[RMDB]
This 170-nucleotide RNA was probed chemically with DMS and 2A3.
RNA sequence: GGGAACGACUCGAGUAGAGUCGAAAAAUCUGCGUGCUCGCAUGACAUAUGUAUGCCAGUGUGGUGGUGAACGUCAUCGGCAAUUAGUCGAACACACCACCCCCUGGUUGCUGCUCUCAGGCACACCAUAGCGAGAGGUUCGCCUCUCGCAAAAGAAACAACAACAACAAC
Reactivity to DMS in 0.01 (KOAc 150mM, MgCl2 10mM, bicine 150mM(pH8.5), 24C), signal-to-noise 4, nucleotides 027 to 129: a090u010c040u010g020c120g010u000g020c110u050c130g050c100a040u040g010a100c090a150u100a100u080g070u030a010u090g010c000c010a050g020u010g110u010g000g040u010g000g020u010g000a080a150c160g050u040c150a000u000c040g000g050c040a090a140u120u050a140g010u030c040g070a030a070c050a090c010a020c000c000a000c010c010c020c140c000u040g000g040u050u000g020c060u010g040c030u050c040u020c000a100g020g000c020a060c020a110c000c100a170u000a070
Reactivity to 2A3 in 0.01 (KOAc 150mM, MgCl2 10mM, bicine 150mM(pH8.5), 24C), signal-to-noise 8, nucleotides 027 to 129: a000u070c040u030g030c020g030u020g010c010u030c110g020c030a040u150g050a030c000a080u210a040u180g100u080a000u190g010c000c000a020g010u030g010u050g180g010u010g010g000u000g030a200a040c070g030u050c100a150u020c000g020g060c020a020a200u240u080a100g010u000c000g000a020a010c040a000c000a000c030c000a000c000c000c000c000c010u000g010g000u000u030g000c000u010g010c000u000c010u010c050a030g000g000c020a000c010a020c040c010a020u110a030

For 2A3 the reverse transcriptase was SuperScript II with manganese. Conditions: 150 mM KOAc, 10 mM MgCl2 and 150 mM bicine (pH 8.5), 24 C.